[RMDB]
RNA sequence: GGGAACGACUCGAGUAGAGUCGAAAACGGAGUCCGCGUUCCAUUCUUUCUUACCUGAUGGCCGGCAUGGUCCCAGCCUCCUCGCUGGCGCCGGCUGGGCAACAUUCCGAGGGGACCGCCUCCUCGGCAUCAGAUUAGACUUCGGUCUAAUCUGAUGAAAAGAAACAACAACAACAAC
Reactivity to DMS in 0.01 (KOAc 150mM, MgCl2 10mM, bicine 150mM(pH8.5), 24C), signal-to-noise 2, nucleotides 027 to 126: c060g030g000a090g000u000c030c090g000c070g010u010u000c010c020a140u000u010c040u010u000u010c070u020u010a120c080c060u000g010a120u000g010g010c020c010g020g020c010a100u010g010g000u020c300c010c010a060g030c010c070u000c140c080u010c120g020c030u000g000g010c270g020c010c000g000g000c040u000g000g000g000c030a070a080c090a060u000u010c010c000g010a020g040g000g020g020a160c130c170g000c100c030u000c010c000u000c010g000g000
Reactivity to 2A3 in 0.01 (KOAc 150mM, MgCl2 10mM, bicine 150mM(pH8.5), 24C), signal-to-noise 1, nucleotides 027 to 126: c030g040g030a010g080u030c060c050g040c010g070u080u060c040c000a080u090u020c040u100u150u010c020u130u140a130c070c060u080g090a150u110g130g010c000c030g030g020c020a090u160g040g040u080c050c030c010a000g010c030c000u100c030c050u070c110g000c030u020g060g010c080g000c000c000g060g000c000u020g000g000g050c020a020a030c000a060u110u060c000c000g020a020g000g030g000g010a070c010c030g080c060c030u030c000c000u020c000g000g000